[RMDB]
RNA sequence: GGGAACGACUCGAGUAGAGUCGAAAAUGAUGCCCUUCGGCACCUCGUGAAUCGACACCGUUGCCGCAAGAGUAAACCCAUAGUUUGCAAAGUGGAACGGUCUGUUCGGCCACUGCUUUUCCACGGGUAUAAAUUACGAGUUCGCUCGUAAUUUAUAAAAAGAAACAACAACAACAAC
Reactivity to 2A3 in 0.01 (KOAc 150mM, MgCl2 10mM, bicine 150mM(pH8.5), 24C), signal-to-noise 9, nucleotides 027 to 126: u180g050a050u130g020c000c000c000u030u070c030g020g000c020a030c010c020u080c050g050u040g080a060a080u100c040g060a020c010a010c020c020g040u040u120g210c000c000g010c080a100a010g020a010g080u030a020a040a050c020c050c040a090u070a080g050u020u030u050g030c030a050a060a040g010u020g010g010a040a030c030g030g050u030c060u090g080u110u080c010g020g010c010c010a030c030u060g040c000u060u040u040u020c030c030a050c040g040g010g000
Reactivity to DMS in 0.01 (KOAc 150mM, MgCl2 10mM, bicine 150mM(pH8.5), 24C), signal-to-noise 9, nucleotides 027 to 126: u020g000a090u030g010c020c010c040u000u020c090g010g010c020a050c070c040u020c110g020u010g010a120a100u030c080g010a090c080a050c020c050g000u000u000g010c000c000g000c080a040a070g010a300g000u010a020a040a060c000c090c130a140u040a150g000u000u000u000g010c030a040a120a120g000u000g000g000a040a020c060g000g000u010c090u020g010u020u020c040g010g000c050c010a150c030u010g000c060u010u000u000u010c020c000a060c080g000g010g010